[RMDB]
RNA sequence: GGGAACGACUCGAGUAGAGUCGAAAACCAUCGACUGUCACCAGAUGCUGCAUCACCUGAUCACUGAUGGCUCAACGGUAUCCGGCGGUGCAACUGAAUACUUGUAGCUGCCUUUUGAGCGGGUUGGAAAAUCGGAGGUUGUUCGCAACCUCCGAAAGGAACGUAAGGAGUUCGCUCCUUACGUUCCAAAAGAAACAACAACAACAAC
Reactivity to 2A3 in 0.01 (KOAc 150mM, MgCl2 10mM, bicine 150mM(pH8.5), 24C), signal-to-noise 2, nucleotides 027 to 156: c010c010a050u180c060g110a050c050u070g040u160c010a020c040c020a030g040a130u050g060c040u020g000c000a010u000c000a000c010c010u040g000a010u030c090a000c020u040g030a100u120g280g000c040u030c060a070a080c050g030g000u000a020u000c010c050g030g000c010g010g010u010g000c000a020a000c010u100g070a060a000u080a160c040u020u120g030u090a030g060c050u040g030c010c030u050u170u080u130g010a050g000c010g040g040g000u020u060g060g040a020a060a010a140u020c000g000g000a000g000g010u000u000g000u020u040c080g000c120a010a000c000c000u000c000c000g000a000a000a000